This 170-nucleotide RNA was probed chemically with 2A3 and DMS. 2A3 adducts were read by reverse transcription with SuperScript II with manganese. For DMS the reverse transcriptase was MarathonRT. For 2A3, 14,364 sequencing reads were counted.

[RMDB]
RNA sequence: GGGAACGACUCGAGUAGAGUCGAAAACGCGCGGGUCCUCUUCCUAGGUCCGGAAUCAACCUCCAUCUGAUCUGUCCGGAGCUUUUUCGGCGGAGGAGCUCCCUCCCCGUCCUUCCCUUUUCUUAUUGGAGCGUGAUGUUCGCAUCACGCAAAAGAAACAACAACAACAAC
Reactivity to 2A3 in 0.01 (KOAc 150mM, MgCl2 10mM, bicine 150mM(pH8.5), 24C), signal-to-noise 6, nucleotides 027 to 129: c050g060c010g000c010g010g000g000u010c000c000u000c020u020u010c010c010u030a030g000g110u000c000c010g000g030a010a030u080c030a000a110c030c030u070c040c020a130u040c090u080g080a040u020c030u130g100u010c020c000g050g000a050g020c020u070u050u010u040u130c040g010g010c010g020g010a020g020g000a000g040c040u080c000c000c010u030c000c000c000c000g040u060c000c020u010u010c000c000c000u010u060u020u020c060u050u100a200u060u130g080g020a080
Reactivity to DMS in 0.01 (KOAc 150mM, MgCl2 10mM, bicine 150mM(pH8.5), 24C), signal-to-noise 3, nucleotides 027 to 129: c190g070c160g010c130g000g000g000u010c050c000u020c050u020u020c000c000u030a050g030g040u030c040c050g000g000a000a000u060c060a060a120c140c000u060c000c000a130u040c070u050g030a020u030c120u040g050u040c030c030g010g040a040g000c120u000u000u000u000u000c080g060g000c110g000g040a000g000g040a000g040c070u070c050c000c030u030c050c020c000c000g000u040c020c060u010u060c000c010c010u070u050u060u010c060u010u030a120u050u050g050g020a220